The data come from the RNA Mapping Database (RMDB), library M2RFPK.
Structure probing data (DMS and 2A3) for a 207-nucleotide construct.
For 2A3 the reverse transcriptase was SuperScript II with manganese.
RNA sequence: GGGAACGACUCGAGUAGAGUCGAAAAGGUCAUCCUUCACAGGAUCGUGUGGAAGUCCUGCUCGGGGCGGAAGCAUUAUAACCAUUCGAGCUAGUCAAUGCGUGGCGUGUCUCUCCGCAGCGUGUUGUGUAUGAGAGUGGAUUCGUCCACUCUCAAACCUUCACAUAGGAUUCGUCCUAUGUGAAGGAAAAGAAACAACAACAACAAC
Reactivity to DMS in 0.01 (KOAc 150mM, MgCl2 10mM, bicine 150mM(pH8.5), 24C), signal-to-noise 1, nucleotides 027 to 156: g030g000u020c060a110u000c000c020u000u000c150a110c040a080g000g020a010u010c120g050u010g000u000g000g000a240a160g010u000c030c010u010g030c190u020c110g080g000g050g030c000g010g000a220a190g000c040a110u000u000a150u000a020a090c000c010a140u000u030c050g020a150g030c050u000a140g000u010c020a060a020u030g000c010g000u010g020g030c000g010u000g030u000c060u020c020u000c180c040g030c010a060g000c030g000u000g000u000u000g000u010g060u010a100u000g020a000g030a020g040u000g010g000a040u000u000c170g000u000c000c000a010c000u000c000u000c000a010a050a080
Reactivity to 2A3 in 0.01 (KOAc 150mM, MgCl2 10mM, bicine 150mM(pH8.5), 24C), signal-to-noise 3, nucleotides 027 to 156: g090g020u070c020a060u080c000c010u100u150c080a050c010a050g090g000a100u070c080g040u050g000u040g070g050a030a040g040u010c000c020u040g050c070u060c070g030g000g000g000c020g010g020a010a000g000c000a010u060u050a090u150a130a070c020c020a020u060u090c050g010a020g030c060u130a030g180u140c030a030a030u040g040c030g020u030g020g000c020g020u050g070u070c040u020c010u010c120c010g030c030a040g030c060g000u000g000u010u000g050u040g060u040a170u110g000a000g000a000g000u000g000g010a000u010u030c070g030u000c030c000a000c010u000c000u000c000a000a000a000